[RMDB]
Notes: Chemical mapping of a 177-nucleotide RNA with DMS and 2A3.
RNA sequence: GGGAACGACUCGAGUAGAGUCGAAAAACAUAAGCUAUACAUUUCUCAAGUUGACUCCAGUUCUCAUACUCUGAAACUAUUACCUGGUGCAACAUGGCAAGUAGAUAGCCAGCCAGAUGUCACACUGUCAUAGCAGAACGUUCGCGUUCUGCUAUGAAAAAGAAACAACAACAACAAC
Reactivity to DMS in 0.01 (KOAc 150mM, MgCl2 10mM, bicine 150mM(pH8.5), 24C), signal-to-noise 2, nucleotides 027 to 126: a100c090a070u020a040a060g000c040u000a050u020a030c080a090u010u000u000c000u000c020a050a070g020u000u010g000a090c030u020c020c020a070g020u010u000c060u010c050a030u000a100c100u010c050u010g000a130a090a040c140u000a050u000u000a080c180c020u000g000g000u000g010c050a030a020c050a080u000g000g000c150a050a040g000u010a040g010a060u000a050g020c030c060a130g010c070c030a060g010a090u000g000u000c100a040c090a070c130u010g000
Reactivity to 2A3 in 0.01 (KOAc 150mM, MgCl2 10mM, bicine 150mM(pH8.5), 24C), signal-to-noise 2, nucleotides 027 to 126: a010c020a020u180a100a000g000c030u060a020u030a190c060a070u050u110u010c020u000c000a010a050g050u050u030g130a140c010u010c010c020a050g010u110u000c080u030c060a050u060a080c070u090c050u130g050a160a050a040c030u070a090u150u050a080c020c040u020g020g030u030g020c030a040a020c010a050u020g040g000c010a020a020g000u010a070g070a140u070a030g060c020c010a020g000c000c000a040g030a060u070g080u050c020a010c020a030c160u080g010
2A3 adducts were read by reverse transcription with SuperScript II with manganese. Reactivities are given for positions 27 through 126. The 2A3 profile rests on 1,279 reads.